RNA sequence: GGGAACGACUCGAGUAGAGUCGAAAACGUGAACAUCGCUCUGCUAAGUCCCGUCGUUCUUCCAGUCAGAGCGAGAUUGUAAGCAACCUUAUGCGCAAUGAAGACAUAGAGGGACUUCUAUAACAAGAGUAGGCGAUAUGUUCGCAUAUCGCCUACUAAAAGAAACAACAACAACAAC
Reactivity to 2A3 in 0.01 (KOAc 150mM, MgCl2 10mM, bicine 150mM(pH8.5), 24C), signal-to-noise 3, nucleotides 027 to 126: c060g210u170g110a050a020c060a080u020c000g020c000u040c000u030g060c040u080a060a000g030u070c030c000c000g040u020c020g010u090u000c000u110u040c060c000a120g120u220c000a000g020a000g000c070g000a000g000a010u030u040g030u120a140a000g000c010a010a140c100c000u140u100a070u120g010c060g040c010a000a090u110g030a090a010g050a000c030a040u080a010g060a060g010g020g000a000c000u000u040c000u080a170u010a130a160c060a050a110g040
Reactivity to DMS in 0.01 (KOAc 150mM, MgCl2 10mM, bicine 150mM(pH8.5), 24C), signal-to-noise 2, nucleotides 027 to 126: c080g080u000g030a070a040c030a100u000c020g000c000u000c050u010g030c120u000a050a000g000u030c060c000c000g010u010c040g000u000u000c070u020u010c060c040a110g000u050c000a000g020a000g000c040g030a020g030a050u000u010g010u050a080a110g020c030a080a240c110c120u010u050a100u000g030c070g000c050a040a010u010g000a090a050g000a120c110a040u000a080g000a080g040g000g000a010c000u000u000c100u040a020u060a130a030c210a090a050g000